[RMDB]
RNA sequence: GGGAACGACUCGAGUAGAGUCGAAAAAGCGGUGAUACGUCACCGCAAUGUUUGGUGGUCCCUGAGAAUGCUCCGACAUCUUCGAAGUAGCGUAGCUGUCGAGCACCAUUGGGGACCAGCGGAUUAAGAACCGCUCAAAAUUCGUUUUGAGCGGUUCAAAAGAAACAACAACAACAAC
Reactivity to DMS in 0.01 (KOAc 150mM, MgCl2 10mM, bicine 150mM(pH8.5), 24C), signal-to-noise 2, nucleotides 027 to 126: a140g010c010g000g030u000g000a000u010a070c120g020u000c000a010c000c000g000c000a030a000u000g010u000u000u000g030g000u000g000g010u000c010c010c010u040g000a000g000a300a180u000g000c010u000c040c050g030a000c020a000u000c000u040u000c000g000a120a200g020u010a160g040c020g010u000a010g020c140u010g000u010c000g000a020g000c000a010c050c020a300u000u000g000g000g010g000a000c020c010a060g000c030g010g000a100u000u010a110a120
Reactivity to 2A3 in 0.01 (KOAc 150mM, MgCl2 10mM, bicine 150mM(pH8.5), 24C), signal-to-noise 3, nucleotides 027 to 126: a000g000c010g040g020u000g010a020u030a110c180g080u030c000a010c020c000g000c010a000a030u090g010u040u040u020g290g050u010g000g000u070c010c000c030u010g000a010g000a000a060u030g000c030u050c130c090g000a010c010a030u000c010u050u070c010g170a300a140g210u190a120g220c010g030u010a000g000c010u000g010u000c000g000a000g000c020a000c000c020a030u010u000g010g000g010g000a000c000c000a000g000c010g010g010a040u040u190a120a030

Conditions: 150 mM KOAc, 10 mM MgCl2 and 150 mM bicine (pH 8.5), 24 C. The record gives the reactivity of an RNA of 177 nucleotides to DMS and 2A3. Source: RMDB libraries RFM100 and RFMREP, as collected in RNAgym. In probing experiments dimethyl sulfate is read out at A N1 and C N3, which are open when not base-paired.